An RNA of 177 nucleotides, treated with DMS and 2A3 and read out base by base.
For 2A3 the reverse transcriptase was SuperScript II with manganese.
The RNA was probed in 150 mM KOAc, 10 mM MgCl2 and 150 mM bicine (pH 8.5) at 24 C.
RNA sequence: GGGAACGACUCGAGUAGAGUCGAAAAGAUAUGGACUUGUCCAAAGGGAGCAGGGUGAUCGGAAACGAUCACAUUGCAUCGAUCUUUGGAGCAAGUCCUAAGUCAAACACCCAGUUCGCUGGGUGAAGAUCAUAUGUGCGUUCGCGCACAUAUGAUCAAAAGAAACAACAACAACAAC
Reactivity to DMS in 0.01 (KOAc 150mM, MgCl2 10mM, bicine 150mM(pH8.5), 24C), signal-to-noise 2, nucleotides 027 to 126: g000a020u000a300u000g000g020a000c000u000u000g010u000c010c000a000a000a010g000g000g010a050g050c000a020g000g010g030u000g000a000u000c020g010g010a140a200a140c020g020a000u010c000a000c010a030u000u000g000c010a300u020c210g000a020u000c010u000u000u000g000g020a050g000c010a000a000g000u000c000c000u020a010a080g000u010c010a140a110a300c020a010c000c000c000a010g020u000u000c300g000c000u010g020g000g020u000g000a040a060
Reactivity to 2A3 in 0.01 (KOAc 150mM, MgCl2 10mM, bicine 150mM(pH8.5), 24C), signal-to-noise 2, nucleotides 027 to 126: g010a030u090a070u110g000g000a000c000u000u010g050u000c000c010a010a000a010g030g020g050a040g030c000a010g000g080g000u010g010a000u000c010g030g070a040a080a030c000g010a010u000c020a020c020a030u010u010g000c030a190u300c020g070a070u070c030u010u020u010g020g020a120g060c010a000a000g000u010c000c000u010a000a010g030u050c020a000a110a090c010a010c000c030c000a010g030u060u040c300g020c200u000g000g020g000u010g010a030a030